[RMDB]
RNA sequence: GGGAACGACUCGAGUAGAGUCGAAAAGACGCCUGUGUGGCGAAGCGAGCAAUGGAAUAAGCCGCAAUAGAUGAUGAGAAGGAAGCGGCAAGAUGGAAAGCUCGCAAUGAGAUCCAUCUGCCAGAGAGACGUAUAAUGCCUUCGGGCAUUAUACGUCAAAAGAAACAACAACAACAAC
Reactivity to 2A3 in 0.01 (KOAc 150mM, MgCl2 10mM, bicine 150mM(pH8.5), 24C), signal-to-noise 2, nucleotides 027 to 126: g060a050c050g010c040c000u140g030u040g020u030g140g010c000g040a010a080g000c020g040a060g000c010a060a300u220g070g010a120a050u240a100a000g000c000c000g000c010a040a080u070a100g190a050u090g030a000u080g030a020g080a110a070g090g000a130a000g030c010g090g010c030a000a020g000a000u000g000g000a000a000a110g020c000u000c000g000c000a010a030u210g000a000g020a020u050c000c000a000u000c000u000g000c000c000a000g000a010g000a000
Reactivity to DMS in 0.01 (KOAc 150mM, MgCl2 10mM, bicine 150mM(pH8.5), 24C), signal-to-noise 1, nucleotides 027 to 126: g020a090c060g010c030c000u000g010u020g080u030g040g020c000g020a040a050g000c000g000a010g000c050a130a060u010g010g000a070a110u020a100a220g000c020c000g030c010a050a200u040a090g000a020u000g000a130u020g010a130g020a150a060g020g020a150a260g000c040g040g000c000a000a110g000a010u000g020g000a010a130a020g000c000u000c010g000c050a040a010u010g000a100g000a070u000c010c000a000u000c000u000g000c020c000a100g000a150g000a130